[RMDB]
RNA sequence: GGGAACGACUCGAGUAGAGUCGAAAAUAGGCUGACGCCAAGAUCCCGGAUAACCAGACAGGACACGAAAAGACAAUGACCUGCUUCCUGCCUGCCCUUGCCGGUGCCAACACCAUCUAUGGCGCCGGUACUGUUACAGUUUCGACUGUAACAGUACAAAAGAAACAACAACAACAAC
Reactivity to DMS in 0.01 (KOAc 150mM, MgCl2 10mM, bicine 150mM(pH8.5), 24C), signal-to-noise 9, nucleotides 027 to 126: u040a110g010g010c000u010g030a150c200g010c010c020a090a120g000a110u010c000c010c010g010g000a090u020a070a080c160c030a040g000a070c060a040g010g000a070c080a070c150g000a070a060a090a090g010a120c180a100a070u010g000a140c080c040u010g000c070u010u000c020c010u000g010c020c010u000g000c040c020c030u010u010g010c020c000g000g010u000g010c000c010a050a090c130a120c100c070a060u020c070u010a140u010g000g000c000g010c000c000g000
Reactivity to 2A3 in 0.01 (KOAc 150mM, MgCl2 10mM, bicine 150mM(pH8.5), 24C), signal-to-noise 9, nucleotides 027 to 126: u150a020g030g000c040u090g090a060c130g020c010c010a010a020g080a080u030c010c000c000g000g030a110u110a040a050c040c010a010g030a050c010a020g040g030a020c020a010c110g120a070a100a060a030g130a050c080a090a150u130g070a080c000c010u030g010c040u050u010c000c000u010g000c000c010u030g000c010c010c000u020u080g020c000c000g000g000u010g000c000c000a050a030c060a080c070c030a050u070c040u110a120u090g000g000c000g000c000c000g000